Chemical mapping of a 207-nucleotide RNA with 2A3.
RNA sequence: GGGAACGACUCGAGUAGAGUCGAAAACCGUAGGUUGGCUUGUCAGAAACAUCUGCAGUUGACCUUCGAAAGAGGGUCAACGCUGCAAGAAAUAUAUGUUUCUUGGAUUUAGCCAACCUAAACGGAAAAUCUUCUGUUGGUUCGCCAACAGAAGAAAGAUUGGGUAUUCCUUCGGGAAUACCCAAUCAAAAGAAACAACAACAACAAC
Reactivity to 2A3 in 0.01 (KOAc 150mM, MgCl2 10mM, bicine 150mM(pH8.5), 24C), signal-to-noise 2, nucleotides 027 to 156: c010c000g030u010a000g000g000u000u010g000g010c010u000u030g010u030c010a000g020a000a000a000c020a020u000c020u080g000c000a020g000u020u000g010a010c000c010u020u000c010g010a010a000a040g000a000g000g020g020u000c000a000a020c070g010c050u030g020c020a100a150g070a060a190a020u250a020u090a010u050g000u000u000u020c000u030u170g120g000a050u300u110u140a010g010c010c010a000a000c000c010u000a000a000a000c000g030g000a020a060a050a120u020c000u010u060c000u000g000u000u000g000g040u050u030c220g060c080c000a000a020c000a000g000a000a000g010a020a000a020

The reactions ran in a buffer of 150 mM KOAc, 10 mM MgCl2 and 150 mM bicine (pH 8.5), at 24 C.